[RMDB]
RNA sequence: GGGAACGACUCGAGUAGAGUCGAAAAGAUAUGGACACUCUCCCCACCAUUCGAGGACAAUGAUGUCGGAAACGAUUGAGUCCUCCGAUGAGGAGUGUCCUAAGUCAAACACGUCUUCGGACGUGAAUCCUCUGCCUUAGUUCGCUAAGGCAGAGGAAAAAGAAACAACAACAACAAC
Reactivity to DMS in 0.01 (KOAc 150mM, MgCl2 10mM, bicine 150mM(pH8.5), 24C), signal-to-noise 2, nucleotides 027 to 126: g030a130u000a110u010g000g040a010c000a000c000u010c000u040c170c020c000c020a300c080c000a050u000u010c300g010a020g000g010a020c020a130a080u000g040a080u000g000u000c000g000g000a030a060a140c000g000a020u000u000g000a110g020u000c000c000u000c030c070g020a000u020g000a120g000g010a020g020u000g000u000c000c000u000a020a150g000u030c110a080a100a160c000a000c000g030u000c000u020u020c130g010g010a000c000g000u030g000a010a080
Reactivity to 2A3 in 0.01 (KOAc 150mM, MgCl2 10mM, bicine 150mM(pH8.5), 24C), signal-to-noise 1, nucleotides 027 to 126: g030a060u230a080u190g000g020a010c010a000c050u010c030u070c040c020c030c020a030c010c000a010u010u010c040g030a000g000g000a000c010a050a250u220g050a030u170g080u030c020g000g000a050a120a030c000g010a030u040u050g060a010g010u010c030c010u060c000c000g020a000u010g000a000g100g010a020g000u020g040u030c000c000u000a030a010g100u040c000a120a040a080c030a020c030g000u010c000u060u090c230g170g000a000c000g000u000g000a000a060
Annotation
An RNA of 177 nucleotides, treated with DMS and 2A3 and read out base by base. Values cover nucleotides 27 to 126. The RNA was probed in 150 mM KOAc, 10 mM MgCl2 and 150 mM bicine (pH 8.5) at 24 C.